[RMDB]
Record summary:
Structure probing data (DMS and 2A3) for a 177-nucleotide construct. The RNA was probed in 150 mM KOAc, 10 mM MgCl2 and 150 mM bicine (pH 8.5) at 24 C. The data come from the RNA Mapping Database (RMDB), library M2PK90. For DMS, 1,702 sequencing reads were counted. Values cover nucleotides 27 to 126.
RNA sequence: GGGAACGACUCGAGUAGAGUCGAAAACAGAACGGGUGGUAUAGGAGCCGGCCCGACCCGGGCUCCCUCGCUGGCUUCAUCGUCGGGCUCCGACAAGGAAGACAAUGGAAAGCCCACAUCCUGAGAACAAUACUGUUCCUUUCGAGGAACAGUAUUGAAAAGAAACAACAACAACAAC
Reactivity to DMS in 0.01 (KOAc 150mM, MgCl2 10mM, bicine 150mM(pH8.5), 24C), signal-to-noise 2, nucleotides 027 to 126: c110a080g010a100a080c070g000g000g000u010g000g000u020a080u010a210g000g000a110g010c020c020g020g070c040c030c050g000a080c080c080c080g020g010g000c020u000c060c020c020u000c060g000c050u000g010g000c000u000u010c010a090u000c090g010u000c000g010g000g010c150u000c010c020g010a050c040a040a090g010g000a020a020g010a040c040a000a050u000g000g000a080a120a100g000c000c010c030a090c150a100u000c040c010u010g020a130g000a160a220
Reactivity to 2A3 in 0.01 (KOAc 150mM, MgCl2 10mM, bicine 150mM(pH8.5), 24C), signal-to-noise 1, nucleotides 027 to 126: c030a010g060a070a040c010g030g030g010u050g020g030u100a170u120a300g080g090a060g080c010c020g050g080c010c010c020g050a090c030c080c000g090g040g050c000u020c000c000c040u010c010g040c040u030g020g010c000u070u050c020a050u080c020g000u020c040g030g060g150c090u090c030c010g030a070c050a020a060g060g010a030a030g020a040c010a020a000u040g060g100a050a180a050g000c020c020c010a040c010a020u090c010c020u090g060a070g030a120a000